About this RNA
This 207-nucleotide RNA was probed chemically with DMS and 2A3. The RNA was probed in 150 mM KOAc, 10 mM MgCl2 and 150 mM bicine (pH 8.5) at 24 C. For DMS the reverse transcriptase was MarathonRT. The 2A3 profile rests on 3,946 reads.

RNA sequence: GGGAACGACUCGAGUAGAGUCGAAAAGAUCUGCGCCGAUCCGAAACGCUAGCAAACAGCCCGCAUCAUGUCGUCUCCUAACUUCGACGUGGUGAAAUACUGAGCUUUUGCGAGUAAGCCUGUUAGCAAUAGAUCAGAACGUUCGCGUUCUGAUCAAGUAGCAUAGUGGGUUCGCCCACUAUGCUACAAAAGAAACAACAACAACAAC
Reactivity to DMS in 0.01 (KOAc 150mM, MgCl2 10mM, bicine 150mM(pH8.5), 24C), signal-to-noise 1, nucleotides 027 to 156: g000a110u000c020u020g030c100g030c040c040g010a090u010c020c030g030a070a040a110c080g020c030u010a010g000c040a030a050a040c080a060g000c010c000c000g010c010a000u000c010a010u000g010u010c010g000u010c060u030c110c060u000a090a070c100u000u000c000g000a010c000g050u000g000g030u020g000a050a100a120u000a160c120u020g000a020g030c020u020u000u000u030g000c050g000a050g000u000a080a130g030c010c010u000g000u000u000a140g000c020a080a150u000a110g030a010u000c000a030g020a030a030c030g030u000u010c300g020c030g010u000u000c000u000g010a000u000c000a000a110
Reactivity to 2A3 in 0.01 (KOAc 150mM, MgCl2 10mM, bicine 150mM(pH8.5), 24C), signal-to-noise 5, nucleotides 027 to 156: g020a020u020c030u080g030c060g020c040c060g030a030u000c010c030g020a050a050a020c060g010c060u030a020g000c020a020a010a080c090a110g000c010c010c020g020c000a010u000c000a000u000g000u000c000g020u010c050u080c100c090u140a180a180c090u060u040c020g010a010c000g010u000g000g010u000g030a050a060a000u190a040c060u070g020a010g000c000u020u030u020u010g020c010g020a030g030u050a030a060g030c010c010u070g050u120u150a020g020c060a080a130u060a170g010a000u000c000a000g000a000a000c010g000u050u060c190g010c010g090u000u000c020u000g000a000u000c000a000a000